Notes: The data come from the RNA Mapping Database (RMDB), library OK2TST. An RNA of 177 nucleotides, treated with 2A3 and DMS and read out base by base. DMS adducts were read by reverse transcription with MarathonRT. 2A3 adducts were read by reverse transcription with SuperScript II with manganese. For 2A3, 8,506 sequencing reads were counted. Conditions: 150 mM KOAc, 10 mM MgCl2 and 150 mM bicine (pH 8.5), 24 C.

[RMDB]
RNA sequence: GGGAACGACUCGAGUAGAGUCGAAAAGUCGGUAAAGACCACGGCGAAGGCCAGCACCACGAUAAGGAUCGCCACGAACGGCACCCGGCCGCGCAGGUCGAGAUCCUUGAAGCUGUGGUACUUGAUAUAUCCUAUUAGCAUUCGUGCUAAUAGGAUAAAAAGAAACAACAACAACAAC
Reactivity to 2A3 in 0.01 (KOAc 150mM, MgCl2 10mM, bicine 150mM(pH8.5), 24C), signal-to-noise 4, nucleotides 027 to 126: g030u020c020g010g090u130a080a010a010g020a020c000c000a010c000g000g000c040g050a110a040g040g010c020c030a020g010c050a050c030c020a040c040g070a070u060a180a010g010g000a000u010c030g020c020c010a050c070g130a200a020c030g020g000c010a070c040c090c010g050g010c000c010g010c030g030c110a040g020g000u050c030g010a010g000a010u010c000c000u010u020g050a090a000g010c010u020g010u010g010g000u020a180c000u010u090g040a010u010a000
Reactivity to DMS in 0.01 (KOAc 150mM, MgCl2 10mM, bicine 150mM(pH8.5), 24C), signal-to-noise 9, nucleotides 027 to 126: g010u010c060g020g010u000a100a070a070g000a070c010c020a040c030g010g010c010g010a140a120g020g010c040c040a120g010c100a130c040c030a110c140g000a130u010a030a020g000g000a020u000c040g000c020c040a110c120g010a110a070c060g000g010c010a150c120c070c060g000g000c000c010g010c150g000c160a120g010g010u010c090g010a140g000a020u000c000c000u000u000g010a090a120g010c030u000g020u000g000g010u000a040c020u000u000g000a110u010a120